The record gives the reactivity of an RNA of 177 nucleotides to DMS and 2A3. For 2A3 the reverse transcriptase was SuperScript II with manganese. The RNA was probed in 150 mM KOAc, 10 mM MgCl2 and 150 mM bicine (pH 8.5) at 24 C. The 2A3 profile rests on 1,967 reads.
RNA sequence: GGGAACGACUCGAGUAGAGUCGAAAAGGCUGGCUCCUGCUUGCAGUCCCAGCUUCCGGAAUGAGAGGGAGAGCGCAGCAUCUGGCUCCACACGAUCAUCCAGUACAUUUCACCACAUUGUCUGCAGCUUGAGUAAACUGUUCGCAGUUUACUCAAGAAAAGAAACAACAACAACAAC
Reactivity to DMS in 0.01 (KOAc 150mM, MgCl2 10mM, bicine 150mM(pH8.5), 24C), signal-to-noise 2, nucleotides 027 to 126: g010g010c030u000g000g000c060u010c080c010u000g020c030u010u020g030c040a040g010u000c260c000c010a090g000c030u000u000c040c040g020g010a120a060u010g010a040g000a160g000g000g000a160g010a080g010c080g020c070a060g000c080a060u000c090u020g010g000c070u000c030c030a050c080a060c050g000a120u000c080a060u000c030c020a000g010u010a040c080a080u000u010u000c030a070c040c030a090c110a110u010u010g010u000c010u000g000c110a140g020
Reactivity to 2A3 in 0.01 (KOAc 150mM, MgCl2 10mM, bicine 150mM(pH8.5), 24C), signal-to-noise 2, nucleotides 027 to 126: g090g000c010u000g020g020c040u040c060c030u090g060c000u070u110g000c020a030g040u000c050c000c000a010g060c000u120u000c010c040g000g100a210a110u100g010a120g000a050g180g020g000a110g010a000g030c180g030c130a020g000c020a070u050c070u060g050g000c010u030c030c000a050c020a020c060g060a070u040c010a050u020c010c020a000g020u040a050c040a120u070u040u080c100a080c090c000a040c050a110u090u150g030u040c020u060g030c050a010g010